[RMDB]
RNA sequence: GGGAACGACUCGAGUAGAGUCGAAAAUUUCCUGGGUCUCUUUAUAAGGGCCAAUACAGGGUUAGGGUCCGGGCAGGGUAGCGGGCUGGGAUCCUAUAGGGAUCGGGAUGGGACAGGGUCGGGCCAAGUGUUUAUAAGGAUUCGUCCUUAUAAACACAAAAGAAACAACAACAACAAC
Reactivity to DMS in 0.01 (KOAc 150mM, MgCl2 10mM, bicine 150mM(pH8.5), 24C), signal-to-noise 2, nucleotides 027 to 126: u000u010u020c000c010u010g010g020g010u010c030u010c010u010u000u000a130u040a120a190g000g000g000c010c000a130a050u010a230c080a070g030g000g000u000u010a080g010g010g000u010c070c080g030g010g010c150a120g020g040g010u000a020g010c130g000g010g000c090u000g000g020g000a020u000c010c010u000a090u000a060g030g010g010a100u000c040g010g010g000a180u000g010g000g020a300c150a090g020g000g000u020c060g000g000g010c200c070a050a040
Reactivity to 2A3 in 0.01 (KOAc 150mM, MgCl2 10mM, bicine 150mM(pH8.5), 24C), signal-to-noise 3, nucleotides 027 to 126: u030u020u040c000c000u000g030g050g010u030c090u020c020u270u140u080a280u120a250a110g010g010g000c000c020a000a010u150a030c030a030g050g020g040u170u170a030g060g020g000u060c100c040g060g030g030c070a060g010g020g040u090a040g100c080g010g050g000c050u060g050g020g000a010u030c000c010u080a100u110a090g080g000g020a010u060c030g010g000g060a080u110g030g040g040a040c070a050g010g040g090u150c050g010g020g020c010c000a030a030